[RMDB]
RNA sequence: GGGAACGACUCGAGUAGAGUCGAAAAAGUUUUACUGGCCGUCAAAUUUGGUUCUCGACCCGCUGUCACCAAUUACGCUGCUUUUUCCUUUUUAUUAACUCCUAUACUUGUGUACGCCCAAAGCCAGAAUUCUGGAUUACUUCGGUAAUCCAGAAUUAAAAGAAACAACAACAACAAC
Reactivity to 2A3 in 0.01 (KOAc 150mM, MgCl2 10mM, bicine 150mM(pH8.5), 24C), signal-to-noise 5, nucleotides 027 to 126: a000g020u010u020u030u070a060c020u020g030g000c000c030g050u050c030a050a070a160u100u090u150g040g000u090u000c030u010c000g080a070c010c020c010g010c040u040g030u040c020a020c040c020a030a020u110u060a050c030g000c020u020g040c010u060u040u000u020u040c010c000u070u090u020u030u040a180u070u130a070a030c030u060c020c000u040a050u040a210c020u060u040g020u030g000u100a030c050g050c010c010c000a020a020a050g040c040c010a060g070
Reactivity to DMS in 0.01 (KOAc 150mM, MgCl2 10mM, bicine 150mM(pH8.5), 24C), signal-to-noise 3, nucleotides 027 to 126: a110g020u020u020u000u010a070c050u010g000g010c010c030g010u010c060a020a050a070u020u010u010g010g010u000u010c020u000c040g000a130c080c030c000g000c040u010g010u010c030a040c060c100a060a110u030u020a080c110g030c040u000g000c010u010u000u010u010u030c020c020u010u000u040u020u030a100u040u030a070a090c060u000c020c020u010a130u010a050c050u020u000g000u010g030u010a020c070g030c020c000c020a020a040a090g010c050c080a080g000
This 177-nucleotide RNA was probed chemically with 2A3 and DMS.
The data come from the RNA Mapping Database (RMDB), libraries RFM100 and RFMREP.
High 2A3 reactivity points to a flexible backbone, as in loops and unpaired stretches.
For DMS the reverse transcriptase was MarathonRT.
Conditions: 150 mM KOAc, 10 mM MgCl2 and 150 mM bicine (pH 8.5), 24 C.